[RMDB]
Chemical mapping of a 177-nucleotide RNA with DMS and 2A3. The reactions ran in a buffer of 150 mM KOAc, 10 mM MgCl2 and 150 mM bicine (pH 8.5), at 24 C.
RNA sequence: GGGAACGACUCGAGUAGAGUCGAAAACAAUGGGAGCUGUCUCAGAGGGAGGAAAAGGGAAGUCCUCUGAAUCCGGCAUUUCCUGCCCCGCUGAAACCUUCUGUCUUUGUCUCCCUCCACCAGAUGACUUAACUCAUUGUUUCGACAAUGAGUUAAGAAAAGAAACAACAACAACAAC
Reactivity to DMS in 0.01 (KOAc 150mM, MgCl2 10mM, bicine 150mM(pH8.5), 24C), signal-to-noise 9, nucleotides 027 to 126: c150a100a070u000g000g010g000a020g020c150u010g010u000c050u000c030a030g000a070g010g000g010a090g010g000a030a050a070a110g000g000g010a050a070g010u000c030c050u000c090u010g010a080a090u000c180c170g010g010c070a080u000u000u000c020c010u000g000c210c010c020c050g010c090u000g000a060a070a080c050c020u000u000c020u000g000u010c060u000u010u000g010u000c040u000c000c000c000u000c050c080a110c130c100a100g010a110u010g010a220
Reactivity to 2A3 in 0.01 (KOAc 150mM, MgCl2 10mM, bicine 150mM(pH8.5), 24C), signal-to-noise 6, nucleotides 027 to 126: c030a020a110u090g010g010g010a030g030c070u060g070u120c010u010c070a000g010a010g030g020g000a070g020g060a060a100a060a050g060g020g020a030a020g070u040c010c020u030c060u090g080a040a060u050c060c000g030g000c060a100u020u030u020c000c020u010g060c010c010c000c010g020c060u080g040a050a060a070c030c000u030u000c010u040g140u030c040u070u150u060g060u030c010u010c010c010c010u030c020c010a060c020c010a040g030a180u130g030a070